[RMDB]
RNA sequence: GGGAACGACUCGAGUAGAGUCGAAAAGCGGGGCUUGAAACGCGGGUAGCGCGCACGCCCGGCGAAGAAGUUCGCAUACGCGGUGUGCUGGUGCCGAGGUGUCUGCUGCAACGGCACGCUCGACACCUAGAACAUACCGUAUUCGUACGGUAUGUAAUACCGUAUUCCUAUUCGUAGGAAUACGGUAAAAAGAAACAACAACAACAAC
Reactivity to 2A3 in 0.01 (KOAc 150mM, MgCl2 10mM, bicine 150mM(pH8.5), 24C), signal-to-noise 4, nucleotides 027 to 156: g010c020g000g020g010g000c040u060u080g060a100a110a030c050g010c040g020g020g060u120a040g090c060g000c020g000c070a010c010g010c000c000c010g000g010c020g000a010a010g060a020a010g180u060u050c020g000c030a040u080a180c040g020c100g030g020u010g000u010g010c050u070g000g010u020g000c010c010g000a010g010g000u040g010u010c040u110g090c060u130g060c050a110a020c030g010g000c010a010c030g190c000u010c000g000a000c010a010c000c000u030a050g040a040a000c000a000u000a010c000c000g000u010a020u020u070c150g030u010a000c000g000g000u000a000u010g000u020a000a030
Reactivity to DMS in 0.01 (KOAc 150mM, MgCl2 10mM, bicine 150mM(pH8.5), 24C), signal-to-noise 3, nucleotides 027 to 156: g030c050g020g010g040g060c040u000u000g000a110a100a040c010g020c030g020g000g020u000a120g030c020g020c060g030c010a060c050g020c000c000c010g000g030c000g000a030a170g010a140a180g020u000u000c020g020c000a140u020a250c000g010c060g070g060u010g000u000g010c000u000g020g010u000g010c000c000g040a040g010g010u010g010u000c010u010g070c040u000g000c140a200a140c120g000g000c000a030c030g000c020u000c010g010a000c010a030c020c010u000a060g010a130a080c000a050u000a000c010c000g010u000a030u010u000c250g020u000a010c020g020g010u000a010u000g020u000a040a160
Chemical mapping of a 207-nucleotide RNA with 2A3 and DMS. The DMS profile rests on 8,054 reads. The data come from the RNA Mapping Database (RMDB), library M2RFOK. Conditions: 150 mM KOAc, 10 mM MgCl2 and 150 mM bicine (pH 8.5), 24 C. Values cover nucleotides 27 to 156.